[RMDB]
RNA sequence: GGGAACGACUCGAGUAGAGUCGAAAAGGGCAGGGGCAUUGUCCAUUCCGAACGCUCGCCGGAAGAAGAACGCGCUGGCCCCAUGCCGAUUUCCGGUGUGCAGACAUGGCUUGCCUUGCCGGAUGCAUCCUAGUGGGUGGUUCGCCACCCACUAGGAAAAAGAAACAACAACAACAAC
Reactivity to DMS in 0.01 (KOAc 150mM, MgCl2 10mM, bicine 150mM(pH8.5), 24C), signal-to-noise 1, nucleotides 027 to 126: g000g000g060c010a000g010g030g010g000c020a060u020u000g000u000c000c000a030u000u020c060c150g030a170a170c220g000c020u020c030g000c030c000g010g000a060a010g010a140a080g030a120a110c070g000c170g000c010u010g020g000c040c060c030c000a110u020g000c010c010g000a110u000u000u000c010c000g000g000u000g000u000g020c030a130g010a120c200a040u000g000g010c000u000u000g000c010c000u000u000g010c030c000g010g000a050u000g000c180a180
Conditions: 150 mM KOAc, 10 mM MgCl2 and 150 mM bicine (pH 8.5), 24 C. Chemical mapping of a 177-nucleotide RNA with DMS. It was measured as part of the RMDB library OK2TRN. Reactivities are given for positions 27 through 126.